[RMDB]
RNA sequence: GGGAACGACUCGAGUAGAGUCGAAAACUCCCCUCAAAAUCGUUUCAGUCCAAAAUUGAUUCGGCGGCCCUGUCAUGAGGCCGAAACGAAGGCACGUACCCCUUCGAAGGGCGUCGGGGAGUCAGCGAAAGCACUGACCCUUUCGAGGGUCAGUGAAGAAUUGAGUACUAUUCGUAGUACUCAAUUCAAAAGAAACAACAACAACAAC
Reactivity to 2A3 in 0.01 (KOAc 150mM, MgCl2 10mM, bicine 150mM(pH8.5), 24C), signal-to-noise 5, nucleotides 027 to 156: c020u010c010c010c000c010u120c090a160a170a100a140u050c030g000u010u010u030c060a090g080u060c050c040a080a080a160a160u130u120g040a150u130u080c040g050g010c020g050g040c050c010c000u110g030u100c030a100u080g000a070g020g000c010c010g000a000a000a010c000g010a030a020g040g050c110a010c100g130u300a290c000c010c010c020u050u060c050g050a060a030g010g010g000c010g020u020c030g020g000g000g010a010g000u010c030a020g040c020g140a150a070a020g040c000a000c000u000g010a000c000c000c000u020u050u090c150g080a020g010g000g000u000c000a000g000u000g000a000a020
Reactivity to DMS in 0.01 (KOAc 150mM, MgCl2 10mM, bicine 150mM(pH8.5), 24C), signal-to-noise 2, nucleotides 027 to 156: c030u010c010c000c000c050u000c040a050a100a110a090u000c020g000u000u000u000c010a040g020u010c040c080a020a120a150a210u000u020g000a110u000u010c130g060g010c060g020g010c030c020c020u000g010u010c120a060u030g000a090g000g000c000c000g000a010a020a050c020g000a080a090g020g030c060a100c060g000u000a070c000c010c000c020u000u000c120g010a120a070g000g020g050c000g000u000c060g000g000g000g000a060g000u000c030a120g030c020g000a110a100a150g020c010a010c000u000g010a030c000c000c000u000u000u010c170g000a040g040g020g000u000c000a000g020u000g020a050a090
This 207-nucleotide RNA was probed chemically with 2A3 and DMS.
High 2A3 reactivity points to a flexible backbone, as in loops and unpaired stretches.
It was measured as part of the RMDB library M2RFPK.